RNA sequence: GGGAACGACUCGAGUAGAGUCGAAAAAAUUUAGAUUAUCCAGGUGUAGCGGUGAAAUUCGUAGAGAUCUGGUGGAUAAUGAUCCGGUGGCGAAGGCGAAAGAUAACCGCUGAAAUGCUGAAGUGAAAUAUUGGAGGUGAUUCGUCACCUCCAAUAUAAAAGAAACAACAACAACAAC
Reactivity to DMS in 0.01 (KOAc 150mM, MgCl2 10mM, bicine 150mM(pH8.5), 24C), signal-to-noise 2, nucleotides 027 to 126: a050a060u000u000u000a100g030a140u010u000a040u010c030c010a100g010g010u000g020u000a070g020c020g000g000u000g010a100a100a090u000u000c030g030u000a100g020a120g000a130u000c010u000g010g000u010g000g000a050u010a090a070u000g020a180u000c030c030g000g020u000g010g010c090g020a110a090g020g010c000g010a020a080a050g000a060u000a110a070c020c000g000c000u000g000a040a050a080u010g010c000u000g020a100a070g010u010g000a090a070
Structure probing data (DMS) for a 177-nucleotide construct.
The DMS profile rests on 1,664 reads.
The data come from the RNA Mapping Database (RMDB), library M2PK90.